Description
The record gives the reactivity of an RNA of 177 nucleotides to 2A3 and DMS. The reactions ran in a buffer of 150 mM KOAc, 10 mM MgCl2 and 150 mM bicine (pH 8.5), at 24 C. The DMS profile rests on 1,589 reads. Values cover nucleotides 27 to 126.

RNA sequence: GGGAACGACUCGAGUAGAGUCGAAAAUGUUGAGCGGAAUUGGCAUUCCGGUCAAUUUGCCAAUCAUCUCUUCGGCGUCAUCGGCGGUAUAACGCUGACCUUUAUUGUCGACUAACUGCACGUUACAACCAUUUUACCCGUUCGCGGGUAAAAUGGUAAAAGAAACAACAACAACAAC
Reactivity to 2A3 in 0.01 (KOAc 150mM, MgCl2 10mM, bicine 150mM(pH8.5), 24C), signal-to-noise 2, nucleotides 027 to 126: u100g010u030u030g010a060g130c010g000g020a030a040u000u080g160g050c060a040u100u020c040c060g030g130u000c000a010a020u040u030u110g030c020c000a060a080u090c030a070u030c060u010c030u120u040c020g010g000c000g030u060c030a030u070c020g040g000c010g000g010u050a110u030a240a030c050g010c050u030g070a090c010c000u060u130u070a140u050u170g060u020c030g050a060c000u070a110a010c030u100g000c050a030c080g050u040u060a010c050a040
Reactivity to DMS in 0.01 (KOAc 150mM, MgCl2 10mM, bicine 150mM(pH8.5), 24C), signal-to-noise 2, nucleotides 027 to 126: u010g000u030u020g000a040g010c040g010g030a010a030u000u000g020g000c200a300u020u010c050c030g020g000u000c020a050a020u020u000u000g000c000c000a140a070u000c100a090u000c040u010c070u000u000c070g010g000c050g000u000c060a080u000c080g020g000c040g020g010u000a080u010a070a100c120g020c080u000g000a010c090c050u000u000u000a070u020u000g000u000c030g000a050c130u010a070a050c070u020g030c050a040c050g000u000u010a070c120a110
Values are in units of 0.01, from 0 to 300, in steps of 10.